Structure probing data (2A3 and DMS) for a 207-nucleotide construct. DMS adducts were read by reverse transcription with MarathonRT. The 2A3 profile rests on 1,237 reads. 2A3 is a SHAPE reagent: it acylates the 2'-hydroxyl of flexible nucleotides of all four kinds. 2A3 adducts were read by reverse transcription with SuperScript II with manganese. Reactivities are given for positions 27 through 156. Source: RMDB library OK3TST, as collected in RNAgym.
RNA sequence: GGGAACGACUCGAGUAGAGUCGAAAAUGGAAACAGAUAUUUUUCAUGCUGUUAAUGGGAAUUGAUCUGGCCAAACCCUGUGAAAGCAGCACACUAAGAAUUUCCUCUCAAUAUUUACCAACGUGAUAACUAAAAGAAGAAAAAUGGCCCUGUUAUAGGUAAAUCAUCAUUUCGAUGAUGAUUUACCAAAAGAAACAACAACAACAAC
Reactivity to 2A3 in 0.01 (KOAc 150mM, MgCl2 10mM, bicine 150mM(pH8.5), 24C), signal-to-noise 3, nucleotides 027 to 156: u110g030g040a070a080a010c050a050g080a080u050a100u080u100u040u090u130c030a030u050g060c010u020g020u150u130a120a110u110g000g000g010a020a050u090u060g030a060u080c060u090g050g050c010c000a010a050a090c020c010c010u020g020u000g130a120a130a000g020c000a000g000c020a050c010a030c060u080a060a020g030a100a090u050u050u000c010c020u020c020u020c040a090a090u030a120u120u110u060a130c050c050a070a060c070g050u050g060a050u050a110a030c040u100a080a100a020a070g120a060a020g060a040a090a070a030a070u100g040g000c020c000c020u050g040u140u060a190u180a050
Reactivity to DMS in 0.01 (KOAc 150mM, MgCl2 10mM, bicine 150mM(pH8.5), 24C), signal-to-noise 1, nucleotides 027 to 156: u020g020g000a140a100a110c010a050g000a110u010a000u000u000u000u000u030c040a080u000g020c080u030g040u000u000a100a040u000g030g010g000a030a020u000u000g000a050u000c020u030g010g000c100c020a140a170a180c020c000c040u020g020u000g010a110a120a100g000c000a030g030c030a070c030a050c100u000a160a120g020a050a240u000u030u000c020c020u000c030u010c050a110a140u000a060u000u000u000a140c020c010a130a070c150g080u000g000a020u010a000a120c060u010a100a120a100a040g010a020a070g000a010a060a050a070a090u000g010g000c030c020c050u020g010u000u000a150u010a100